[RMDB]
RNA sequence: GGGAACGACUCGAGUAGAGUCGAAAAGCCCAUAUGUUCGCAUAUGGGCAAAAGCAGAUCUGAGCAUGCGAGCUCUGUGCGACAAAAGUCAACGCAAUAAAAAAACACGUCACUUCGGUGACGUGAAGCAAGAAUAAAUGUUCGCAUUUAUUCUUGCAAAAGAAACAACAACAACAAC
Reactivity to 2A3 in 0.01 (KOAc 150mM, MgCl2 10mM, bicine 150mM(pH8.5), 24C), signal-to-noise 8, nucleotides 027 to 126: g000c000c000c010a010u020a010u010g020u010u050c180g000c120a000u020a020u060g000g000g000c030a060a050a000a010g000c020a010g030a120u070c040u120g030a010g060c050a050u130g060c060g080a040g000c010u000c010u030g050u040g020c030g020a050c060a040a220a010a010g070u090c040a050a100c060g010c080a060a090u240a190a100a020a010a000a000a010c010a000c000g000u000c000a000c010u030u070c210g080g000u000g000a000c000g000u000g000a000a010
Reactivity to DMS in 0.01 (KOAc 150mM, MgCl2 10mM, bicine 150mM(pH8.5), 24C), signal-to-noise 5, nucleotides 027 to 126: g010c000c010c000a040u010a020u000g010u010u020c180g020c000a010u000a010u020g010g020g010c000a000a010a030a120g010c040a060g010a110u000c080u000g020a050g010c040a110u000g010c070g010a170g020c010u000c020u010g020u000g010c040g000a070c090a050a100a090a120g010u010c080a050a100c080g000c080a060a080u060a010a000a060a060a060a090a160c000a010c000g010u000c000a000c010u000u020c200g040g010u000g000a000c000g010u000g000a040a090
Structure probing data (2A3 and DMS) for a 177-nucleotide construct. For 2A3, 18,228 sequencing reads were counted.